[RMDB]
RNA sequence: GGGAACGACUCGAGUAGAGUCGAAAAUGGCCUUAUAUUUGGACUGUUGACUGUGGUCCUGAGAGUUCAGUUGUGAGUAACGUAAAACCCAGAUUUCCUAUAAACAGAACAACACACUCUGAGCUUCCUUAUACCAUUUUGAUAAAUAUAGUGAAGCGUACCAAAACGGAUUCGUCCGUUUUGGUACAAAAGAAACAACAACAACAAC
Reactivity to DMS in 0.01 (KOAc 150mM, MgCl2 10mM, bicine 150mM(pH8.5), 24C), signal-to-noise 1, nucleotides 027 to 156: u010g000g020c050c030u000u000a120u030a120u000u010u000g010g020a040c070u000g020u010u030g000a140c150u000g040u000g010g000u000c030c000u010g000a090g000a060g000u000u010c060a110g000u000u020g000u050g030a120g020u010a130a200c080g010u000a070a060a090a140c040c000c040a150g010a300u000u030u000c030c000u010a090u010a090a110a190c080a070g030a090a110c010a090a080c050a090c060a050c130u000c030u000g020a090g000c020u000u010c010c000u010u000a170u000a030c060c020a160u000u000u010u000g020a070u010a050a060a060u010a180u000a080g000u010g000a090a110g000c020
Reactivity to 2A3 in 0.01 (KOAc 150mM, MgCl2 10mM, bicine 150mM(pH8.5), 24C), signal-to-noise 2, nucleotides 027 to 156: u050g020g040c010c000u160u070a160u020a120u160u030u090g020g010a020c030u010g100u080u070g050a120c110u080g010u080g130g000u020c010c000u000g010a040g010a000g080u030u110c050a000g010u040u030g030u010g050a050g020u070a050a000c030g020u000a000a000a080a080c010c000c020a030g000a050u100u060u090c020c010u070a060u160a230a080a020c080a040g050a090a030c010a120a000c010a020c000a000c040u040c030u010g000a030g040c020u080u060c000c020u060u040a060u050a060c000c000a080u000u120u070u170g050a070u040a100a050a010u090a020u010a130g040u060g060a050a020g030c020
Chemical mapping of a 207-nucleotide RNA with DMS and 2A3. Source: RMDB library OK3TST, as collected in RNAgym. For DMS, 1,687 sequencing reads were counted. Conditions: 150 mM KOAc, 10 mM MgCl2 and 150 mM bicine (pH 8.5), 24 C.